Chemical mapping of a 207-nucleotide RNA with 2A3 and DMS. For 2A3 the reverse transcriptase was SuperScript II with manganese. Values cover nucleotides 27 to 156. It was measured as part of the RMDB library RNAMAK. High DMS reactivity at an A or C suggests that its Watson-Crick edge is free.

RNA sequence: GGGAACGACUCGAGUAGAGUCGAAAAGCGUACUACAAGUAUCUUUGGAGUUUCGACGAAGCAUCGAACUACGCUGUCCCAAAUAGGACAGCGCGAUGCAGAGAAACUCGAUACUUGUAUCGCAAAAGAUAACAUUCAGUUCGCUGAAUGUUAUCAAUCUGGUGUACAUGUUCGCAUGUACACCAGAAAAAGAAACAACAACAACAAC
Reactivity to 2A3 in 0.01 (KOAc 150mM, MgCl2 10mM, bicine 150mM(pH8.5), 24C), signal-to-noise 4, nucleotides 027 to 156: g010c010g030u110a100c040u000a000c030a000a010g000u010a030u040c080u230u300u300g170g000a070g030u030u000u010c220g120a300c060g030a190a030g010c000a000u010c010g040a140a150c100u100a070c220g000c010u010g000u000c020c020c010a120a180a070u220a060g000g000a000c000a000g000c010g010c010g000a000u000g000c000a000g010a000g000a010a000a000c000u000c000g000a000u000a000c000u000u000g000u000a000u070c000g000c000a020a010a000a110g000a000u000a000a020c000a000u000u000c000a010g000u100u140c210g110c150u000g000a000a000u000g000u000u000a000u000c000a000a090
Reactivity to DMS in 0.01 (KOAc 150mM, MgCl2 10mM, bicine 150mM(pH8.5), 24C), signal-to-noise 1, nucleotides 027 to 156: g040c020g040u010a080c090u010a000c010a000a030g020u000a050u000c040u010u010u010g060g000a030g050u000u000u000c010g000a300c140g010a180a220g010c010a030u000c010g010a190a300c040u000a020c000g010c020u000g050u000c010c010c000a020a260a160u010a020g020g000a040c010a030g030c000g040c000g020a030u000g050c010a080g000a300g000a000a010a020c000u000c000g000a010u000a000c000u030u000g000u000a000u000c000g040c030a060a020a140a140g010a010u000a000a000c010a000u010u000c000a000g000u000u010c300g000c030u000g000a050a010u020g030u000u000a000u000c000a050a100